Structure probing data (DMS and 2A3) for a 177-nucleotide construct. It was measured as part of the RMDB library VIROID. The 2A3 profile rests on 4,603 reads. Values cover nucleotides 27 to 126. Conditions: 150 mM KOAc, 10 mM MgCl2 and 150 mM bicine (pH 8.5), 24 C.
RNA sequence: GGGAACGACUCGAGUAGAGUCGAAAAUUAGCCCAGACUUAUGAGAGAGUGGUUACCUCUCAACCCCUCCACCUUGGGGUGCCCUAUUCGGAGCAUGCAGUUCCCGAUAGAAAGGCUAAGCACCUCGCAAGUUAUAACUGUUCGCAGUUAUAACUUGAAAAGAAACAACAACAACAAC
Reactivity to DMS in 0.01 (KOAc 150mM, MgCl2 10mM, bicine 150mM(pH8.5), 24C), signal-to-noise 6, nucleotides 027 to 126: u000u010a130g010c010c000c040a160g010a140c160u000u000a070u000g000a020g000a030g010a050g000u010g020g000u000u000a140c160c010u000c000u000c000a050a200c010c000c000c000u000c040c030a230c150c100u010u010g020g000g000g010u000g010c010c150c000u000a040u010u000c300g010g000a040g020c030a140u010g030c150a160g010u000u000c030c000c020g000a020u000a030g010a090a090a070g010g010c230u010a040a130g010c030a030c010c010u000c050g030
Reactivity to 2A3 in 0.01 (KOAc 150mM, MgCl2 10mM, bicine 150mM(pH8.5), 24C), signal-to-noise 3, nucleotides 027 to 126: u060u030a040g030c000c000c010a040g080a110c110u230u170a080u220g020a020g000a000g010a010g060u060g040g130u180u160a040c010c000u010c000u020c010a030a060c010c010c020c000u000c010c000a090c030c010u050u090g000g000g000g000u000g000c000c020c000u030a070u060u040c020g000g000a020g010c040a070u300g060c040a040g030u050u010c010c020c010g000a010u000a010g070a060a170a000g030g000c020u030a080a000g010c010a000c000c000u000c000g010